[RMDB]
RNA sequence: GGGAACGACUCGAGUAGAGUCGAAAAGAUAUGGAUCCGAAGUGCGAGAAGUGGUCGGAAACGACCAUACUUCGAUGAGCACUGGAUCCUAAGUCAAAAUCCUACAUGCGUUCGCGCAUGUAGGAAAGAGAUUGCUGUAGUUCGCUACAGCAAUCUCAAAAGAAACAACAACAACAAC
Reactivity to DMS in 0.01 (KOAc 150mM, MgCl2 10mM, bicine 150mM(pH8.5), 24C), signal-to-noise 2, nucleotides 027 to 126: g000a040u020a080u020g010g010a020u000c010c010g020a110a100g030u000g000c010g000a050g020a010a030g020u010g000g000u000c010g000g000a020a010a060c000g020a010c010c000a060u010a060c010u000u000c020g020a230u030g010a300g020c000a010c000u010g010g010a000u000c000c010u000a010a150g000u000c010a100a080a120a140u000c010c000u010a040c000a010u000g000c000g050u000u020c290g040c010g010c010a000u010g000u010a000g010g010a000a000a090
Reactivity to 2A3 in 0.01 (KOAc 150mM, MgCl2 10mM, bicine 150mM(pH8.5), 24C), signal-to-noise 2, nucleotides 027 to 126: g010a000u020a020u090g000g000a020u010c030c070g230a280a040g050u020g030c030g060a140g010a110a000g040u010g000g000u000c000g000g030a020a000a010c000g000a000c000c010a010u030a020c000u000u000c030g210a300u250g060a030g010c020a010c010u010g000g000a010u000c000c000u000a010a000g000u010c020a000a020a030a290u030c000c020u000a010c000a020u010g030c000g020u030u140c300g030c040g000c190a010u030g020u000a010g000g000a020a000a020